[RMDB]
RNA sequence: GGGAACGACUCGAGUAGAGUCGAAAACUCUGCAUAUUCGUAUGCAGAGAAAUAACGGUCGGCUCAUGCAGCUAGUCGAACAUGCUGCUCGACCUUUUGGUUAAAACCGGAGGUUCGCCUCCGGUAAUUGAUAGACACGGUUCGCCGUGUCUAUCAAAAAAGAAACAACAACAACAAC
Reactivity to DMS in 0.01 (KOAc 150mM, MgCl2 10mM, bicine 150mM(pH8.5), 24C), signal-to-noise 2, nucleotides 027 to 126: c000u010c000u000g000c000a010u000a030u000u020c150g050u000a000u000g000c000a000g010a010g010a010a060a040u010a070a090c170g010g000u000c000g000g010c060u000c070a050u000g000c050a300g000c030u000a180g020u010c090g000a130a220c040a020u010g000c080u000g000c010u000c010g000a020c010c010u000u000u000u000g040g010u010u000a030a030a140a060c000c000g020g000a020g000g000u000u010c170g010c000c000u000c010c000g000g020u000a000a010